[RMDB]
RNA sequence: GGGAACGACUCGAGUAGAGUCGAAAAGUCAUGCCUUCGGGCAUGACAGGUACCGAGAGGUACCAAAUAGCGUACAGGAGACUCAGACUGUACGCUAAAAAAGUGUGUGUUCAAUAAGUCCCAAUUGAACACACACUAAAAUGGGACAAGGGUGUCACAGCCAGUAAAUAUUCGUAUUUACUGGCUGAAAAGAAACAACAACAACAAC
Reactivity to 2A3 in 0.01 (KOAc 150mM, MgCl2 10mM, bicine 150mM(pH8.5), 24C), signal-to-noise 3, nucleotides 027 to 156: g010u010c000a000u020g010c010c010u040u070c250g060g000g000c000a000u010g000a000c000a000g000g000u000a000c000c000g010a040g000a020g080g000u000a000c000c010a000a020a040u050a000g000c000g020u000a000c000a000g050g080a060g130a150c050u040c140a010g030a090c000u010g000u010a000c000g000c000u000a000a000a060a000a010a030g000u000g000u000g000u000g000u000u000c010a020a000u070a100a030g060u020c010c000c000a000a000u000u000g000a000a000c000a000c000a000c000a000c000u010a000a000a000a060u130g030g000g010a020c060a060a050g090g050g040u080g040u050c040a020
Reactivity to DMS in 0.01 (KOAc 150mM, MgCl2 10mM, bicine 150mM(pH8.5), 24C), signal-to-noise 1, nucleotides 027 to 156: g030u010c000a010u020g020c000c000u020u010c300g060g030g000c020a010u000g000a040c030a030g020g030u010a020c000c040g030a300g000a300g020g000u010a000c000c050a040a050a060u000a050g060c030g030u000a000c010a000g000g010a250g000a090c090u090c090a140g000a290c000u010g040u000a000c000g000c010u000a000a030a040a100a040a020g010u000g000u000g000u050g030u000u000c010a020a020u000a030a050g020u000c000c020c000a090a080u000u000g010a030a010c010a010c020a000c010a000c010u000a000a010a090a120u000g000g020g020a130c010a070a090g040g040g020u020g020u000c050a270